[RMDB]
RNA sequence: GGGAACGACUCGAGUAGAGUCGAAAAGGUUCACACCCCCAACCGGCGGGCCGGCUGCUCUUCUUUCCCUUCUCUCGUCUUCCUCGGUCAACCUCUUGAGUUCCCCUUCUUCCUCCUCGCUGAGGCGCUAUCAUCGGCUUCGGCCGAUGAAAAAGAAACAACAACAACAAC
Reactivity to 2A3 in 0.01 (KOAc 150mM, MgCl2 10mM, bicine 150mM(pH8.5), 24C), signal-to-noise 3, nucleotides 027 to 129: g020g000u090u070c040a030c010a040c100c020c000c000c000a060a020c010c000g020g010c000g000g050g020c010c000g020g000c040u040g020c000u010c010u060u020c020u010u030u070c000c000c010u060u000c000u000c000u000c010g030u000c010u100u030c010c020u010c020g010g000u030c020a050a080c000c010u010c010u040u000g050a020g020u010u010c000c010c020c020u060u030c000u040u040c000c000u010c010c000u030c000g040c030u000g030a000g010g020c000g010c030u070a070
Reactivity to DMS in 0.01 (KOAc 150mM, MgCl2 10mM, bicine 150mM(pH8.5), 24C), signal-to-noise 8, nucleotides 027 to 129: g070g030u010u020c000a070c100a300c040c020c020c020c030a160a130c090c000g030g040c020g000g000g100c010c000g020g030c050u050g000c030u020c110u050u040c020u010u010u010c050c000c020u000u000c030u000c040u010c060g000u030c050u030u040c020c040u030c070g000g000u000c090a080a180c110c030u000c040u010u080g030a160g030u040u000c010c000c010c060u030u040c030u010u040c030c020u020c010c050u020c080g030c000u000g000a090g000g000c000g010c090u020a000